[RMDB]
RNA sequence: GGGAACGACUCGAGUAGAGUCGAAAAAUGAACGUGGUGGGCGUAAGUUAGUAGAACAUCUAAUGGUACGCGGUGGGUUUUCGACUGUACUCGAAACCACCACCACCACCAAGUCGUUCCCACCGAAUGACGAAAGGAUAUUCGUAUCCUUUCGUCAAAAAGAAACAACAACAACAAC
Reactivity to DMS in 0.01 (KOAc 150mM, MgCl2 10mM, bicine 150mM(pH8.5), 24C), signal-to-noise 3, nucleotides 027 to 126: a100u030g010a060a060c090g010u000g020g030u000g000g000g010c000g010u000a130a290g020u000u000a010g000u010a060g000a100a150c270a120u010c010u000a010a040u010g000g020u000a010c010g000c030g020g010u000g000g000g010u010u000u000u000c020g010a020c050u000g000u000a040c090u000c000g020a050a050a060c010c010a030c040c030a110c090c120a050c010c020a030c010c080a040a020g020u000c010g010u000u000c000c000c000a100c120c140g000a110a140
Reactivity to 2A3 in 0.01 (KOAc 150mM, MgCl2 10mM, bicine 150mM(pH8.5), 24C), signal-to-noise 4, nucleotides 027 to 126: a010u260g020a040a020c030g010u010g000g000u010g000g010g040c010g000u000a040a020g010u020u030a010g000u010a040g080a260a070c020a080u040c020u010a000a020u040g290g030u040a000c010g010c040g030g020u000g010g010g020u000u030u050u100c000g000a010c020u100g100u180a020c000u010c000g000a030a010a000c010c000a010c010c010a030c020c010a000c010c000a010c000c010a030a000g010u000c010g000u010u000c020c020c000a010c010c030g040a060a120

An RNA of 177 nucleotides, treated with DMS and 2A3 and read out base by base. Values cover nucleotides 27 to 126. The reactions ran in a buffer of 150 mM KOAc, 10 mM MgCl2 and 150 mM bicine (pH 8.5), at 24 C. For 2A3 the reverse transcriptase was SuperScript II with manganese. For DMS, 2,585 sequencing reads were counted.